Source information: An RNA of 177 nucleotides, treated with 2A3 and DMS and read out base by base. For DMS, 1,554 sequencing reads were counted. The RNA was probed in 150 mM KOAc, 10 mM MgCl2 and 150 mM bicine (pH 8.5) at 24 C. For 2A3, 1,701 sequencing reads were counted. High 2A3 reactivity points to a flexible backbone, as in loops and unpaired stretches.

RNA sequence: GGGAACGACUCGAGUAGAGUCGAAAACACAUUCUAUUCGUAGAAUGUGGAACGUAGAGAGAUCGACAGCGUCGCAGCUAUCUCGAACGAGGAAGAGCGCGCAGGGAUCGGGCUUCGGCCCGAUCAAGUGUUUCGAUACUUUCGAGUAUCGAAACACAAAAGAAACAACAACAACAAC
Reactivity to 2A3 in 0.01 (KOAc 150mM, MgCl2 10mM, bicine 150mM(pH8.5), 24C), signal-to-noise 2, nucleotides 027 to 126: c010a000c000a000u000u020c000u000a040u040u120c110g110u040a010g000a010a010u010g000u010g010g010a080a030c020g100u180a040g010a000g000a010g010a210u050c070g060a040c040a030g000c030g130u280c090g000c040a080g080c010u020a060u060c000u000c020g090a270a080c110g000a010g010g050a020a040g000a020g060c030g000c010g000c050a070g090g010g070a000u000c000g000g020g000c010u070u080c220g090g000c000c000c000g010a000u010c000a000a010
Reactivity to DMS in 0.01 (KOAc 150mM, MgCl2 10mM, bicine 150mM(pH8.5), 24C), signal-to-noise 2, nucleotides 027 to 126: c000a010c000a000u000u000c000u000a020u010u000c210g010u010a000g000a020a000u010g010u010g010g000a050a080c160g010u010a110g010a100g000a040g000a040u000c040g010a090c130a120g000c070g000u010c040g040c020a110g000c020u000a070u010c020u010c010g020a060a110c200g010a090g010g000a070a030g000a220g010c010g000c050g000c080a140g000g040g000a010u000c000g000g010g000c000u000u030c220g020g010c000c000c010g010a000u000c000a020a080